The data come from the RNA Mapping Database (RMDB), library OK1LIB. Chemical mapping of a 177-nucleotide RNA with DMS and 2A3. The reactions ran in a buffer of 150 mM KOAc, 10 mM MgCl2 and 150 mM bicine (pH 8.5), at 24 C. 2A3 adducts were read by reverse transcription with SuperScript II with manganese. The 2A3 profile rests on 1,048 reads. Reactivities are given for positions 27 through 126.
[RMDB]
RNA sequence: GGGAACGACUCGAGUAGAGUCGAAAAUCUGUGAGGGGUCACGGUUGUCGUGGGCGUCGUUGCCAUUAGAUGAACGUUAGACUAUAGUCGUAUGGAGUUAGUUUAUUUAAAGUUUUGGGCGGGCGAGCUAUAUUUAUUAAUUCGUUAAUAAAUAUAGAAAAGAAACAACAACAACAAC
Reactivity to DMS in 0.01 (KOAc 150mM, MgCl2 10mM, bicine 150mM(pH8.5), 24C), signal-to-noise 4, nucleotides 027 to 126: u040c040u020g010u010g000a070g000g010g000g020u010c040a070c060g010g000u010u010g000u010c040g040u020g010g010g000c060g000u000c060g010u010u010g000c030c030a150u010u010a070g000a050u010g000a040a040c040g010u010u020a070g000a050c020u010a070u010a130g020u010c080g000u000a050u020g000g000a110g010u000u010a070g010u000u010u010a020u010u010u020a040a070a170g000u010u010u020u010g020g010g000c110g000g000g010c050g010a060g010
Reactivity to 2A3 in 0.01 (KOAc 150mM, MgCl2 10mM, bicine 150mM(pH8.5), 24C), signal-to-noise 2, nucleotides 027 to 126: u040c030u030g050u050g050a040g030g020g000g000u030c020a020c040g030g000u040u050g080u090c030g020u110g030g000g020c030g030u030c010g030u050u070g030c010c010a040u050u080a030g070a060u050g030a050a040c040g070u110u110a040g010a010c010u030a030u070a190g090u120c040g020u030a060u110g090g060a020g000u030u030a010g000u010u100u070a150u020u120u090a110a120a000g020u040u050u160u020g000g010g010c040g000g030g000c000g020a020g010